[RMDB]
RNA sequence: GGGAACGACUCGAGUAGAGUCGAAAAGGAAUUGGUAGAAAAGAGCGAGCCUCCCGAUACGAGUUUGCCAGGACCUAUCAAGUUUGGAGUCAUCCGGCCCGUAGGGGAGAAUAGAACACCGGGGGGUAUAGUACCUGGUUCGCCAGGUACAAAAGAAACAACAACAACAAC
Reactivity to 2A3 in 0.01 (KOAc 150mM, MgCl2 10mM, bicine 150mM(pH8.5), 24C), signal-to-noise 7, nucleotides 027 to 129: g050g020a050a090u140u080g040g020u110a050g090a040a110a060a010g100a020g030c050g010a000g020c000c010u040c000c020c010g000a010u050a080c080g020a050g070u030u100u070g060c020c030a040g020g030a030c010c000u040a070u160c090a080a070g030u050u140u110g050g010a020g020u030c020a060u020c010c000g000g000c000c010c010g020u040a030g000g010g000g000a020g020a010a030u120a030g040a030a010c030a020c050c010g000g010g010g000g000g000u030a050u040a040
Reactivity to DMS in 0.01 (KOAc 150mM, MgCl2 10mM, bicine 150mM(pH8.5), 24C), signal-to-noise 7, nucleotides 027 to 129: g000g000a050a080u020u010g010g010u060a060g030a010a030a030a030g020a090g030c060g000a110g010c030c000u010c000c000c000g000a110u050a060c090g030a130g010u010u000u010g010c060c030a060g010g000a120c060c020u040a070u050c120a110a080g000u030u050u040g000g000a020g000u030c130a140u000c040c020g030g010c050c030c030g040u000a050g030g000g030g010a060g000a050a040u040a100g020a070a080c110a070c040c020g040g010g000g020g010g050u000a030u050a060